An RNA of 177 nucleotides, treated with DMS and 2A3 and read out base by base. Conditions: 150 mM KOAc, 10 mM MgCl2 and 150 mM bicine (pH 8.5), 24 C.
RNA sequence: GGGAACGACUCGAGUAGAGUCGAAAACAUAUAUCAGAGAUAAACAAGAUGACUAUUCAAAAAAGAACAUUGCUAAGUAUCUUAAAAAAUCAAUUGAACAGUAUCUACCAAUCAUUAAAAGGCAGGACCUUAUCUUACUGUUCGCAGUAAGAUAAGGAAAAGAAACAACAACAACAAC
Reactivity to DMS in 0.01 (KOAc 150mM, MgCl2 10mM, bicine 150mM(pH8.5), 24C), signal-to-noise 4, nucleotides 027 to 126: c110a130u010a070u000a110u000c070a070g000a180g010a040u010a060a080a080c130a170a080g020a040u000g020a060c050u000a090u000u010c040a000a040a070a100a050a070g000a050a070c070a020u000u010g000c090u010a050a100g010u000a050u000c010u000u000a000a010a080a070a110a040u010c070a030a140u010u020g010a020a030c060a030g010u010a030u000c010u000a070c050c050a050a070u010c080a070u000u030a050a040a070a060g000g030c080a020g010g010a200
Reactivity to 2A3 in 0.01 (KOAc 150mM, MgCl2 10mM, bicine 150mM(pH8.5), 24C), signal-to-noise 5, nucleotides 027 to 126: c010a010u140a000u040a060u230c060a010g060a010g020a100u070a080a120a020c040a070a030g020a030u050g040a040c020u030a060u080u090c030a010a090a050a040a060a020g030a050a010c020a040u030u120g020c030u040a050a040g020u050a140u060c020u020u130a090a100a020a020a030a070u140c050a010a150u060u050g000a020a000c010a020g020u020a010u030c010u020a050c030c020a050a010u080c020a020u120u230a050a130a030a000g070g020c020a020g030g070a020
For DMS, 3,212 sequencing reads were counted. In probing experiments dimethyl sulfate is read out at A N1 and C N3, which are open when not base-paired.